[RMDB]
RNA sequence: GGGAACGACUCGAGUAGAGUCGAAAAGUGAACGAUCUCGGUUGUUUCUCUGAAGGCAUGAUCACCCGGUCCGAUGCGGAAGUUCGUGCUUCCGUCGAACGCGAAAGUCGGACGGCGGCCAUGAGUCAAUAUGUUUAAGGCUUCGGCCUUAAACAAACGGGUCUAAUAACUUCGGUUAUUAGACCCGAAAAGAAACAACAACAACAAC
Reactivity to 2A3 in 0.01 (KOAc 150mM, MgCl2 10mM, bicine 150mM(pH8.5), 24C), signal-to-noise 2, nucleotides 027 to 156: g170u070g050a120a030c080g040a080u070c010u000c010g070g000u000u010g030u000u030u010c060u020c040u030g110a080a110g060g010c030a030u090g000a110u090c060a080c070c000c010g040g080u020c010c010g030a010u030g000c040g030g010a010a000g000u100u300c150g110u300g040c000u000u000c000c010g020u040c000g050a150a050c000g020c040g130a250a030a030g040u020c020g010g010a000c010g010g020c040g030g000c060c000a030u080g070a010g060u050c030a040a080u080a060u200g010u000u010u000a010a010g020g000c010u080u140c300g060g000c000c010u000u000a000a000a000c000a000a000a000

This 207-nucleotide RNA was probed chemically with 2A3.